[RMDB]
RNA sequence: GGGAACGACUCGAGUAGAGUCGAAAAAAUACGUCCCGAGUCCGAUAGCGCAAUAGUAGGGUGACCGAAAGCUGAAAAGAACCCCGAGAAGGGGAGUGAAAAGAGCCUGAAAUCGGCCGGGGAUAGUUUUACUCUAUGACUUCGGUCAUAGAGUAAAAAAAGAAACAACAACAACAAC
Reactivity to 2A3 in 0.01 (KOAc 150mM, MgCl2 10mM, bicine 150mM(pH8.5), 24C), signal-to-noise 1, nucleotides 027 to 126: a000a000u070a000c020g060u060c000c000c000g000a130g000u010c030c000g020a070u100a030g300c110g070c110a120a060u030a160g010u010a000g000g070g010u050g060a160c060c000g120a050a000a000g000c040u040g010a000a040a140a000g050a170a190c000c020c000c000g000a000g200a150a070g060g000g000g000a010g020u050g020a000a000a100a120g080a000g080c010c010u010g000a000a000a230u030c000g000g000c030c000g030g000g020g000a010u140a050g040u000
Reactivity to DMS in 0.01 (KOAc 150mM, MgCl2 10mM, bicine 150mM(pH8.5), 24C), signal-to-noise 2, nucleotides 027 to 126: a050a060u010a220c130g000u000c010c000c000g010a080g000u040c000c010g070a030u000a080g000c120g020c250a190a150u040a070g060u000a170g000g000g000u010g000a170c100c030g000a080a060a190g000c090u000g000a040a140a110a200g000a120a190c000c000c000c000g000a210g000a170a120g000g020g000g010a000g000u020g020a070a100a280a070g000a300g040c000c030u030g000a030a210a110u000c030g000g000c140c020g000g020g000g000a030u020a060g010u010